[RMDB]
RNA sequence: GGGAACGACUCGAGUAGAGUCGAAAAUUGCUGCCGGUGGUCAAGAGCACCCGCGGCCCUAAACCUUGCGCCACGGCACACGCUGCCGCUGCACUGUCUACUUUGUAGAGCUGCGGAUGAUGAAUAGUGCUUACACAGUUUUCGAACUGUGUAAGCAAAAAGAAACAACAACAACAAC
Reactivity to DMS in 0.01 (KOAc 150mM, MgCl2 10mM, bicine 150mM(pH8.5), 24C), signal-to-noise 3, nucleotides 027 to 126: u010u010g010c090u000g010c010c080g030g020u000g010g020u010c060a030a060g000a200g000c060a130c060c010c050g000c030g000g000c010c040c040u000a040a080a140c090c030u000u000g000c100g020c040c070a060c020g000g010c020a020c050a120c210g000c100u010g000c010c020g030c050u000g020c030a100c110u020g010u000c030u010a040c040u000u000u000g020u010a030g010a050g010c030u010g000c010g000g010a100u000g010a090u000g000a090a120u000a100g000
Reactivity to 2A3 in 0.01 (KOAc 150mM, MgCl2 10mM, bicine 150mM(pH8.5), 24C), signal-to-noise 2, nucleotides 027 to 126: u090u070g010c030u010g010c030c020g080g000u040g020g060u030c040a040a010g040a010g040c010a030c000c000c010g000c030g040g000c000c010c000u080a120a120a050c010c010u030u040g010c050g030c050c000a010c010g000g030c010a000c000a010c030g080c070u060g000c000c000g000c030u000g030c020a030c100u080g080u080c000u040a040c080u090u070u280g030u050a000g020a010g030c010u010g020c020g010g030a040u060g000a060u040g020a050a080u130a140g080
Structure probing data (DMS and 2A3) for a 177-nucleotide construct. The RNA was probed in 150 mM KOAc, 10 mM MgCl2 and 150 mM bicine (pH 8.5) at 24 C. The DMS profile rests on 3,401 reads.